[RMDB]
RNA sequence: GGGAACGACUCGAGUAGAGUCGAAAAGUACCUAGAGUGUCGGCAAGCUCUAUAUAUGGACACUUACGAAGGGUUUUGGUUGUUUUGUAUCUCAAGCCGACUUUGAGUAUUUGAGGAAAAUACGACAUGAAUCCUGUGACGUUCGCGUCACAGGAAAGUAAUGAUCAUCGUUCGCGAUGAUCAUUACAAAAGAAACAACAACAACAAC
Reactivity to DMS in 0.01 (KOAc 150mM, MgCl2 10mM, bicine 150mM(pH8.5), 24C), signal-to-noise 1, nucleotides 027 to 156: g010u010a090c040c020u000a050g020a060g030u010g010u000c000g050g050c040a110a210g010c070u000c030u010a140u000a070u020a110u020g000g030a120c020a040c040u000u000a080c110g000a090a140g000g000g000u000u000u010u000g000g000u000u000g030u000u010u040u010g040u000a130u000c030u000c060a110a100g010c020c010g000a040c050u010u000u030g010a280g010u010a050u000u000u000g000a100g000g000a080a030a040a080u000a070c050g010a120c080a070u000g000a100a170u000c010c000u000g020u000g030a000c000g000u000u000c290g040c020g010u020c000a010c050a050g010g000a000a000a060
Reactivity to 2A3 in 0.01 (KOAc 150mM, MgCl2 10mM, bicine 150mM(pH8.5), 24C), signal-to-noise 2, nucleotides 027 to 156: g030u060a070c020c000u010a010g020a000g000u060g010u050c010g020g050c100a100a060g010c050u000c040u060a000u030a000u040a040u200g140g020a060c040a000c130u110u050a050c140g100a080a080g050g010g040u000u020u100u120g050g000u010u000g010u000u050u010u030g060u050a120u090c060u030c090a000a030g000c010c000g000a020c000u000u020u070g050a050g000u020a040u020u040u040g080a110g100g140a000a040a030a060u050a020c060g020a020c040a080u160g090a110a070u020c010c000u010g010u000g000a010c010g010u020u030c220g040c020g070u000c010a010c010a000g000g000a000a000a000